[RMDB]
RNA sequence: GGGAACGACUCGAGUAGAGUCGAAAAGAUAUGGACAGAGCUUUUGACGCCUCCCACGUCGGAAACGACGUGCGGAGGCGAUAAGCUCGUCCUAAGUCAAACCAGAGACUCUUCGGAGUCUCUGGAACGCUUAAUACAUGUUCGCAUGUAUUAAGCGAAAAGAAACAACAACAACAAC
Reactivity to 2A3 in 0.01 (KOAc 150mM, MgCl2 10mM, bicine 150mM(pH8.5), 24C), signal-to-noise 3, nucleotides 027 to 126: g000a040u070a030u120g010g020a020c160a160g030a180g030c020u090u140u200u290g190a180c100g020c000c000u030c010c000c010a020c030g000u030c010g010g020a230a060a020c040g000a000c020g020u140g030c190g000g030a000g100g000c000g000a000u000a000a000g010c000u000c000g000u000c000c000u010a070a020g010u020c040a090a050a130c010c000a000g000a000g020a010c000u010c050u140u190c300g150g000a010g010u000c010u010c000u000g010g000a010a000
Reactivity to DMS in 0.01 (KOAc 150mM, MgCl2 10mM, bicine 150mM(pH8.5), 24C), signal-to-noise 3, nucleotides 027 to 126: g000a030u000a300u010g000g010a020c000a100g040a020g000c000u000u000u000u000g020a190c120g020c000c010u010c000c000c000a010c000g030u010c000g040g000a070a070a140c000g040a010c000g060u010g010c210g050g000a000g040g050c000g000a000u000a000a020g020c000u000c000g010u000c000c000u000a010a070g000u000c020a110a130a210c000c000a010g000a020g010a030c000u000c000u000u010c200g010g020a010g010u000c000u000c000u000g010g000a030a030
This 177-nucleotide RNA was probed chemically with 2A3 and DMS. For 2A3, 6,294 sequencing reads were counted. The DMS profile rests on 3,578 reads. In probing experiments dimethyl sulfate is read out at A N1 and C N3, which are open when not base-paired. DMS adducts were read by reverse transcription with MarathonRT.